RNA sequence: GGGAACGACUCGAGUAGAGUCGAAAAGCCACGCAUCAUUGAGCACGGAUUGGGAUCCCGCGACCGCCCCGGCCACGCCCACCCCCGCUCCAGGGGUCCCGCGCCCACCGGUUCCUCUCGCGAGCAGGCAUCAUACAUCAUUCGUGAUGUAUGAUGCAAAAGAAACAACAACAACAAC
Reactivity to 2A3 in 0.01 (KOAc 150mM, MgCl2 10mM, bicine 150mM(pH8.5), 24C), signal-to-noise 5, nucleotides 027 to 126: g040c010c010a050c040g010c010a080u070c020a040u090u180g100a040g050c040a020c090g050g050a090u090u120g080g010g020a030u060c010c000c010g030c040g010a020c010c020g020c010c000c000c000g010g000c020c000a020c030g020c000c000c010a040c000c000c000c010c010g020c010u000c020c020a010g010g000g000g000u010c000c010c010g000c010g000c000c010c000a050c010c020g010g000u040u030c000c000u020c000u020c050g040c040g020a010g020c020a020g050
Reactivity to DMS in 0.01 (KOAc 150mM, MgCl2 10mM, bicine 150mM(pH8.5), 24C), signal-to-noise 3, nucleotides 027 to 126: g000c010c020a120c090g000c010a070u030c040a070u010u010g010a090g040c030a120c070g000g010a080u010u010g010g000g020a090u000c040c010c010g000c080g010a090c040c050g010c030c020c060c000g000g030c020c000a040c050g000c000c000c020a130c030c010c010c020c030g020c040u030c020c030a100g020g000g010g000u000c030c020c020g010c080g020c000c000c010a070c100c000g000g010u010u000c000c010u000c000u000c060g030c110g000a030g010c050a100g000

The record gives the reactivity of an RNA of 177 nucleotides to 2A3 and DMS. DMS adducts were read by reverse transcription with MarathonRT. The RNA was probed in 150 mM KOAc, 10 mM MgCl2 and 150 mM bicine (pH 8.5) at 24 C. 2A3 adducts were read by reverse transcription with SuperScript II with manganese. Reactivities are given for positions 27 through 126.